Background: This 177-nucleotide RNA was probed chemically with 2A3 and DMS. Source: RMDB library M2PK50, as collected in RNAgym. For DMS the reverse transcriptase was MarathonRT.
RNA sequence: GGGAACGACUCGAGUAGAGUCGAAAACGAUCAGUCUUCGGACUGAUCGAAAUAAUCUUGACAAACGCCGGUCAAGAAAAACGGCAUAAUAAGAUAGCUGAAAAAGUGGCGGGUUCGCCCGCCACAAGUACAGUAUAAGCUUCGGCUUAUACUGUACAAAAGAAACAACAACAACAAC
Reactivity to 2A3 in 0.01 (KOAc 150mM, MgCl2 10mM, bicine 150mM(pH8.5), 24C), signal-to-noise 4, nucleotides 027 to 126: c000g000a000u000c000a000g030u010c000u030u100c220g100g000a010c000u000g010a010u000c000g000a000a010a000u080a010a060u010c000u010u010g000a000c010a020a170a030c130g070c090c050g060g000u010c000a020a010g060a090a020a000a000a000c000g000g000c020a030u020a190a060u090a230a160g060a160u100a070g020c030u040g090a050a040a020a070a060g000u000g010g000c010g030g000g010u040u060c200g100c050c000c000g000c020c000a000c000a000a000
Reactivity to DMS in 0.01 (KOAc 150mM, MgCl2 10mM, bicine 150mM(pH8.5), 24C), signal-to-noise 2, nucleotides 027 to 126: c020g030a010u000c010a040g000u000c010u000u020c170g020g000a030c020u000g000a000u000c000g000a010a060a030u000a150a060u010c010u000u000g000a010c010a030a090a050c150g000c050c040g030g000u000c000a010a020g000a010a080a100a090a110c030g000g020c010a080u000a080a130u000a130a160g000a130u000a080g000c010u000g030a080a070a090a100a100g020u000g010g020c000g000g020g010u010u010c200g020c000c000c000g010c000c010a000c000a000a040